[RMDB]
Description
Chemical mapping of a 177-nucleotide RNA with DMS and 2A3. For 2A3, 3,356 sequencing reads were counted. Values cover nucleotides 27 to 126.
RNA sequence: GGGAACGACUCGAGUAGAGUCGAAAACCUGGGCGCCGAAGUACUCGCCGUCGGCCAUCACGUCGAGCACGGUCUGGUCGCCGUACUCGCCCCUGCCGAUCUUGUUGACCUUCCCGUGCGCCAGCAGAAUCGCAGCAGAUUUCGAUCUGCUGCGAUUAAAAGAAACAACAACAACAAC
Reactivity to DMS in 0.01 (KOAc 150mM, MgCl2 10mM, bicine 150mM(pH8.5), 24C), signal-to-noise 2, nucleotides 027 to 126: c050c000u000g010g020g030c010g010c030c050g000a030a060g000u020a070c300u020c010g000c080c190g010u000c020g000g020c060c210a020u000c150a190c110g040u000c000g000a030g000c100a020c000g010g000u000c100u000g060g010u010c160g020c000c010g050u000a070c020u000c010g010c040c040c030c070u000g000c000c010g000a060u000c110u010u060g030u020u000g000a030c290c050u000u060c020c140c070g020u000g080c090g000c000c020a060g010c160a070g010
Reactivity to 2A3 in 0.01 (KOAc 150mM, MgCl2 10mM, bicine 150mM(pH8.5), 24C), signal-to-noise 4, nucleotides 027 to 126: c000c000u030g010g010g000c010g000c010c010g020a010a010g010u050a070c020u000c020g010c000c010g030u010c010g000g040c060c020a100u110c050a020c060g050u060c020g020a010g010c040a000c020g000g060u060c080u080g130g060u170c040g000c010c000g010u010a010c010u020c000g010c000c000c000c010u000g000c000c000g050a040u050c040u140u190g070u080u110g060a070c000c000u030u030c030c040c040g030u100g020c020g000c010c010a020g010c030a010g070